[RMDB]
RNA sequence: GGGAACGACUCGAGUAGAGUCGAAAACGGGGGGAUGGAGAACGUGGUCCAGGGCUUGGCCCUGUUUGCCCAGAGAAGGAGCAGCACCAGCAGCUCAGCACACCCUGGCUCCCCAGGGAGUUCAGCAGCCAUGCGCAAUAUUCGUAUUGCGCAUGGCAAAAGAAACAACAACAACAAC
Reactivity to DMS in 0.01 (KOAc 150mM, MgCl2 10mM, bicine 150mM(pH8.5), 24C), signal-to-noise 1, nucleotides 027 to 126: c160g010g000g080g020g030g010a050u000g000g000a070g060a130a090c150g010u000g010g020u020c130c030a010g000g040g020c020u010u010g040g020c020c030c020u000g000u000u000u000g000c020c000c050a110g010a120g020a080a130g000g010a080g000c010a020g000c110a050c110c050a120g020c000a070g030c020u000c030a040g000c100a080c180a150c020c050c000u010g010g000c080u000c050c000c040c020a140g000g000g000a050g010u000u000c060a050g000c200a150